[RMDB]
RNA sequence: GGGAACGACUCGAGUAGAGUCGAAAAAAAUAAUCCCCUGAUAAUAACAAUAAAUCUGGUAAGGCACUUUCAAAAAAUAGCCAAACCACACAUCAUAAAGAAAACCACCACAAUCAAAAUCGGUAACGAAUGGAUGAAGGUUCGCCUUCAUCCAUUCAAAAGAAACAACAACAACAAC
Reactivity to 2A3 in 0.01 (KOAc 150mM, MgCl2 10mM, bicine 150mM(pH8.5), 24C), signal-to-noise 1, nucleotides 027 to 126: a000a000a000u210a000a020u120c000c000c000c010u040g050a000u010a240a000u130a030a010c050a070a000u180a210a100a000u020c090u030g000g050u020a020a020g110g030c060a050c200u040u120u100c130a000a000a010a210a040a000u120a110g000c060c000a010a010a010c020c000a000c000a000c000a000u090c000a010u070a280a040a050g130a100a150a010a000c050c000a010c070c000a160c080a150a000u020c010a010a000a190a000u180c120g100g000u090a060a010c060
An RNA of 177 nucleotides, treated with 2A3 and read out base by base. The reactions ran in a buffer of 150 mM KOAc, 10 mM MgCl2 and 150 mM bicine (pH 8.5), at 24 C. The data come from the RNA Mapping Database (RMDB), library RFM100.